[RMDB]
RNA sequence: GGGAACGACUCGAGUAGAGUCGAAAAAGUUUGAUGUACCAUACUAUCAACAUAUUUACUUGAGUAAGGAACACUUUUGUGCGUACAGUAUUAUUUGGCUUCUUCAGUUGUGCUUUUAAUGCUUGGAUAUAGUUAGGUUAAAAACAUUUUUUAUAUACAUACCGUCGAGGUUCGCCUCGACGGUAUGAAAAGAAACAACAACAACAAC
Reactivity to 2A3 in 0.01 (KOAc 150mM, MgCl2 10mM, bicine 150mM(pH8.5), 24C), signal-to-noise 1, nucleotides 027 to 156: a000g070u090u110u060g120a100u140g010u000a080c030c030a060u000a010c030u030a000u040c080a100a060c040a040u270a200u220u180u030a030c000u100u070g010a000g000u040a050a120g020g050a070a080c030a010c030u080u060u080u040g110u000g050c010g010u070a080c070a050g040u010a080u110u000a050u040u070u110g070g000c000u080u000c000u080u000c160a050g000u090u050g060u050g000c040u080u130u020u030a070a030u220g010c010u000u010g020g040a030u040a010u030a120g000u030u090a100g000g010u000u030a000a050a000a030a000c040a010u040u000u030u160u180u020a180u050a070u240a040